The record gives the reactivity of an RNA of 207 nucleotides to 2A3.

RNA sequence: GGGAACGACUCGAGUAGAGUCGAAAAGGCGCGGUUCGCCGCGCCCCUCCUCCUAAGUCCCACAGCGUCCUUUGUACACUUGGACCCAUCGGAAACGAUGGCUAGUGUGGGACGAACUACUGUGGGAUAUGGAUGCGACGUCCGUUUCGACGGACAACUCAUCAUUGUCGUUCGCGACAAUGAUGAGAAAAGAAACAACAACAACAAC
Reactivity to 2A3 in 0.01 (KOAc 150mM, MgCl2 10mM, bicine 150mM(pH8.5), 24C), signal-to-noise 1, nucleotides 027 to 156: g020g000c030g010c090g030g030u040u170c300g070c120c000g030c000g010c000c000c000c010u000c000c000u000c010c000u080a140a090g070u010c000c010c000a010c020a010g010c030g000u010c030c000u120u210u300g230u260a010c000a010c020u060u180g090g200a230c090c000c000a000u000c020g050g040a030a090a090c010g000a000u010g000g000c010u010a010g010u020g010u060g000g000g010a000c000g000a000a000c040u300a010c010u030g020u010g020g000g000a000u000a000u000g000g000a020u130g090c050g040a120c110g010u010c000c020g020u040u120u130c230g180a020c010g050g040a000c010a010a010